Overview: Conditions: 150 mM KOAc, 10 mM MgCl2 and 150 mM bicine (pH 8.5), 24 C. The record gives the reactivity of an RNA of 177 nucleotides to 2A3 and DMS. Reactivities are given for positions 27 through 126. High 2A3 reactivity points to a flexible backbone, as in loops and unpaired stretches. It was measured as part of the RMDB library OK2TRN. For DMS, 4,636 sequencing reads were counted.
RNA sequence: GGGAACGACUCGAGUAGAGUCGAAAACAACUUCGAUGCUUGCGCGGCGACGUCCAUGGUGGUGACGAAGUUGGUUAUCGCAACCUCGGCUUGCAUCAUCCACUGGUCGGCACCGGCCACCUCGUGGGCGUUACUUAACGUUCGCGUUAAGUAACGCAAAAGAAACAACAACAACAAC
Reactivity to 2A3 in 0.01 (KOAc 150mM, MgCl2 10mM, bicine 150mM(pH8.5), 24C), signal-to-noise 4, nucleotides 027 to 126: c020a010a010c040u110u080c060g060a060u060g020c050u060u070g020c190g000c000g070g000c030g030a040c000g010u000c020c020a050u180g070g000u040g010g030u050g060a030c040g040a010a020g020u060u050g030g020u060u040a240u190c150g000c090a020a020c010c030u050c060g070g010c050u030u070g000c010a020u020c010a020u050c020c010a030c040u020g020g020u020c030g030g000c040a050c120c040g050g020c020c000a020c000c000u040c040g030u020g000g080
Reactivity to DMS in 0.01 (KOAc 150mM, MgCl2 10mM, bicine 150mM(pH8.5), 24C), signal-to-noise 4, nucleotides 027 to 126: c080a130a130c120u010u010c050g010a070u000g000c070u000u000g010c040g010c020g030g000c060g000a060c040g000u000c010c020a040u000g010g010u010g030g040u000g010a110c040g010a020a040g010u000u000g020g000u000u000a070u020c260g000c110a050a040c030c030u010c070g000g020c160u010u010g010c040a050u000c070a040u000c020c020a050c120u000g000g010u000c040g020g000c060a060c100c040g000g000c020c040a030c060c050u000c050g020u000g020g000